[RMDB]
Structure probing data (2A3) for a 207-nucleotide construct.
The RNA was probed in 150 mM KOAc, 10 mM MgCl2 and 150 mM bicine (pH 8.5) at 24 C.
High 2A3 reactivity points to a flexible backbone, as in loops and unpaired stretches.
RNA sequence: GGGAACGACUCGAGUAGAGUCGAAAAGAUUAUGUGGGAGAUGCGCCCUGUCGUGUCACUGGAAACAGAAUUGCGAGUCGCUCGCUCUAGCGAUAUUGAUGUGUACUGUAGCGUACACUGUGCUACUUUAAGGUAUGAUGACGAUACCACGUCAAAAGAGUCAGGCUAAUUUCGAUUAGCCUGACUCAAAAGAAACAACAACAACAAC
Reactivity to 2A3 in 0.01 (KOAc 150mM, MgCl2 10mM, bicine 150mM(pH8.5), 24C), signal-to-noise 2, nucleotides 027 to 156: g050a010u160u180a100u240g030u080g030g030g030a050g060a080u080g080c030g040c030c020c070u050g180u160c030g040u030g010u010c000a000c010u030g110g080a040a080a000c040a030g090a100a130u240u170g020c000g000a000g030u030c000g000c030u000c000g040c050u050c040u060a000g000c030g030a030u010a030u000u190g170a110u130g030u000g000u070a010c030u040g090u160a020g080c020g000u070a030c030a000c060u040g050u130g040c010u010a020c030u080u050u050a080a000g030g000u110a020u200g050a030u170g030a000c000g010a030u010a060c060c000a050c000g010u010c000a000a000a000a030